[RMDB]
RNA sequence: GGGAACGACUCGAGUAGAGUCGAAAAAAUUCUCGGCGGAACCACUAACCGCCUAAAGUGAUGCGCCUUGCCAAGAAGCAGUCUAUGUAAGAGAUUGCGCUUAUCCUAAAGGUGUCAGACGUGAGGCCCAAAUCUUUAUCUUCGGAUAAAGAUUUGGAAAAGAAACAACAACAACAAC
Reactivity to 2A3 in 0.01 (KOAc 150mM, MgCl2 10mM, bicine 150mM(pH8.5), 24C), signal-to-noise 2, nucleotides 027 to 126: a000a000u070u000c000u010c000g020g010c000g050g000a050a030c020c010a040c120u080a050a030c010c010g040c000c000u050a060a080a010g060u030g090a080u060g020c020g000c020c000u020u020g070c070c010a020a030g020a070a010g010c000a000g000u010c010u030a090u190g260u250a130a030g030a000g000a140u030u010g000c030g050c000u030u030a050u090c020c070u070a110a040a020g040g000u010g060u090c020a040g010a040c060g050u030g060a080g110g000c000
Reactivity to DMS in 0.01 (KOAc 150mM, MgCl2 10mM, bicine 150mM(pH8.5), 24C), signal-to-noise 2, nucleotides 027 to 126: a110a170u000u000c000u000c020g000g010c000g000g000a150a090c090c030a050c080u010a160a130c000c000g000c000c020u000a030a010a070g000u010g010a110u010g010c090g000c010c010u000u000g010c240c140a070a070g020a080a110g000c030a000g010u000c000u000a040u020g030u000a170a110g000a020g010a010u000u010g020c010g010c070u000u000a050u010c080c060u000a060a040a060g000g000u000g000u000c040a050g000a100c100g000u000g010a070g010g010c120